[RMDB]
Conditions: 150 mM KOAc, 10 mM MgCl2 and 150 mM bicine (pH 8.5), 24 C. Chemical mapping of a 177-nucleotide RNA with 2A3 and DMS. For 2A3, 3,324 sequencing reads were counted. The data come from the RNA Mapping Database (RMDB), library OK2TST. For DMS the reverse transcriptase was MarathonRT. High 2A3 reactivity points to a flexible backbone, as in loops and unpaired stretches.

RNA sequence: GGGAACGACUCGAGUAGAGUCGAAAACACUUAUUCACAAUUCUUUGAAGAAAUGAAACCUAUGAUUGCUGAAGCUUUCUAUAAAAAGUUUGACGAGGCAGGUAUUUUGAAUCAAGGUAACAAUCCGUCACAAUAACAGUUUCGACUGUUAUUGUGAAAAAGAAACAACAACAACAAC
Reactivity to 2A3 in 0.01 (KOAc 150mM, MgCl2 10mM, bicine 150mM(pH8.5), 24C), signal-to-noise 4, nucleotides 027 to 126: c030a020c010u130u150a080u180u130c040a050c050a120a130u050u030c040u100u110u140g110a150a110g050a070a160a050u110g050a080a080a030c010c020u080a150u270g050a120u080u120g020c020u030g020a040a030g000c010u080u030u010c030u060a130u100a100a150a010a020a010g020u030u040u010g020a000c000g010a010g030g000c020a000g020g010u060a100u060u200u060u100g030a010a010u030c030a060a020g030g000u030a060a010c020a020a080u010c020c030g030
Reactivity to DMS in 0.01 (KOAc 150mM, MgCl2 10mM, bicine 150mM(pH8.5), 24C), signal-to-noise 4, nucleotides 027 to 126: c070a090c080u000u000a090u010u000c040a080c100a080a120u000u000c040u000u000u010g010a100a090g000a080a060a070u000g010a070a140a060c020c030u000a070u000g010a050u000u000g020c030u000g000a170a210g000c010u000u000u000c020u000a060u010a070a080a090a140a110g000u000u000u000g000a070c030g000a220g000g010c010a020g000g000u010a030u010u000u010u000g000a070a020u000c060a030a020g000g000u010a050a080c120a040a080u000c040c080g010